[RMDB]
RNA sequence: GGGAACGACUCGAGUAGAGUCGAAAAUUUGAUUGGAGGUGCAGGACUUAAAGACUUGAUGAUAAACAGAGUGCUUAAAUAUUUUGGAAUGAGCCUACCUUUUGAAGAGAAUUUGUAUAUGCUCAAGCUAUAUCAAUAGUUUCGACUAUUGAUAUAGAAAAGAAACAACAACAACAAC
Reactivity to DMS in 0.01 (KOAc 150mM, MgCl2 10mM, bicine 150mM(pH8.5), 24C), signal-to-noise 9, nucleotides 027 to 126: u010u010u010g010a210u000u010g010g010a050g010g020u010g010c080a040g010g010a120c060u000u000a050a100a100g010a100c030u000u000g010a080u000g010a160u010a050a080a100c100a100g010a060g010u000g010c050u000u010a050a070a100u000a090u000u000u010u000g010g010a100a120u000g000a060g010c020c050u000a060c040c020u000u000u000u010g010a070a100g000a140g000a040a050u000u000u000g010u000a080u010a060u010g010c020u000c040a080a110g010
Reactivity to 2A3 in 0.01 (KOAc 150mM, MgCl2 10mM, bicine 150mM(pH8.5), 24C), signal-to-noise 6, nucleotides 027 to 126: u040u020u070g010a020u020u060g040g020a020g010g010u050g020c030a020g010g030a050c030u080u130a080a070a010g020a010c000u050u030g030a050u060g010a040u190a080a110a000c030a030g040a010g060u090g030c010u060u050a060a140a060u150a140u100u160u120u100g040g040a110a050u040g010a020g010c000c000u050a090c050c000u030u070u060u110g090a100a030g040a000g010a040a030u050u070u040g050u030a100u020a020u190g030c010u000c020a020a020g030
An RNA of 177 nucleotides, treated with DMS and 2A3 and read out base by base. It was measured as part of the RMDB library OK2TST. The 2A3 profile rests on 7,791 reads. Conditions: 150 mM KOAc, 10 mM MgCl2 and 150 mM bicine (pH 8.5), 24 C. 2A3 is a SHAPE reagent: it acylates the 2'-hydroxyl of flexible nucleotides of all four kinds.